RNA sequence: GGGAACGACUCGAGUAGAGUCGAAAACUGUCUCGUCGAAGUGCUGGGCGGUGCCGACCUCGUCGAGCUCGGCCGCGACGGCGCGACCGGCGGUGUGCGCGUGUACAUGCCGAUCACGUCGGGGGUGACUGCGCAACACGACGUCGAAGUGCGCGGCCACCACAGUGGGGUUCGCCCCACUGUGGUGAAAAGAAACAACAACAACAAC
Reactivity to 2A3 in 0.01 (KOAc 150mM, MgCl2 10mM, bicine 150mM(pH8.5), 24C), signal-to-noise 1, nucleotides 027 to 156: c040u050g000u050c030u000c020g000u000c010g070a300a090g010u020g160c000u070g070g040g000c060g040g040u080g060c030c040g090a120c020c060u100c050g040u010c020g030a000g010c070u040c020g020g000c000c000g030c000g040a060c000g060g000c000g000c000g040a020c010c000g030g000c000g000g080u000g020u020g000c000g000c050g050u100g020u020a130c020a080u040g090c000c000g010a080u110c120a050c270g080u010c010g010g000g000g050g000u040g000a000c010u010g000c010g030c010a010a070c010a010c020g210a020c000g000u020c010g050a040a030g040u060g110c000g000c020g030g030c050
Annotation: This 207-nucleotide RNA was probed chemically with 2A3. The reactions ran in a buffer of 150 mM KOAc, 10 mM MgCl2 and 150 mM bicine (pH 8.5), at 24 C. Values cover nucleotides 27 to 156. For 2A3 the reverse transcriptase was SuperScript II with manganese. The data come from the RNA Mapping Database (RMDB), library OK3TST.